[RMDB]
RNA sequence: GGGAACGACUCGAGUAGAGUCGAAAAGGGGUCGAUCUAAGACAGCGCCUAAGGACUCCUCUAGAAGUGACAUGCUAUUGUACUGAAGCCUCCACGGUACUGUAGCAACAGCACUUCUAGAGGAGUCCUUAGGCGUCGAGAUCGACGGAGGCACCCACACGUAAUGUCACUUCGGUGACAUUACGUGAAAAGAAACAACAACAACAAC
Reactivity to DMS in 0.01 (KOAc 150mM, MgCl2 10mM, bicine 150mM(pH8.5), 24C), signal-to-noise 1, nucleotides 027 to 156: g040g010g020g010u010c010g000a050u010c030u020a160a200g070a160c300a200g030c010g000c000c010u000a050a020g010g040a010c010u000c000c000u000c000u030a000g010a020a010g050u000g020a100c060a300u000g040c000u010a010u000u000g020u010a010c000u000g010a050a110g030c030c010u000c010c010a300c100g020g000u000a010c010u000g000u000a010g010c020a030a040c160a160g010c010a010c030u010u000c000u010a010g010a000g010g000a000g000u000c000c000u000u000a000g010g010c020g030u000c010g030a030g000a030u000c010g000a020c030g060g000a020g020g000c030a280c030c000c010a300